[RMDB]
RNA sequence: GGGAACGACUCGAGUAGAGUCGAAAACAGGCCCUGGAUCGAUCCGGCGCGAUCGGCGCGCGCCUGGCGCUAGAGUACACGAUCAUGUAGGCCAUGGUACGUGGCCAGUGCAGCGUACGGCCCGCGAGUCCUUCACCAGUUUCGACUGGUGAAGGACAAAAGAAACAACAACAACAAC
Reactivity to 2A3 in 0.01 (KOAc 150mM, MgCl2 10mM, bicine 150mM(pH8.5), 24C), signal-to-noise 1, nucleotides 027 to 126: c020a050g110g000c000c040c000u080g090g030a120u050c050g020a030u070c060c000g160g000c080g050c120g060a060u040c000g040g000c020g000c010g010c000g000c010c040u050g030g000c000g000c020u100a050g010a060g130u040a040c050a000c010g040a040u030c020a010u090g120u130a060g090g150c050c000a000u020g070g000u060a060c040g010u020g030g010c000c010a050g010u130g100c020a020g040c010g030u060a080c000g010g000c000c020c010g060c010g040a030
Reactivity to DMS in 0.01 (KOAc 150mM, MgCl2 10mM, bicine 150mM(pH8.5), 24C), signal-to-noise 2, nucleotides 027 to 126: c160a080g010g000c000c030c050u010g060g000a110u010c050g000a060u000c030c020g000g020c130g060c070g010a070u000c040g000g000c020g000c060g000c230g000c010c000u010g030g030c000g020c040u000a090g010a090g030u000a110c070a050c020g010a040u000c000a010u010g000u000a120g010g020c200c000a050u000g010g010u010a060c020g040u000g010g000c020c040a060g010u010g020c030a140g010c040g010u000a030c110g020g010c050c030c020g000c050g030a140
An RNA of 177 nucleotides, treated with 2A3 and DMS and read out base by base. For 2A3, 1,596 sequencing reads were counted. Values cover nucleotides 27 to 126. The reactions ran in a buffer of 150 mM KOAc, 10 mM MgCl2 and 150 mM bicine (pH 8.5), at 24 C.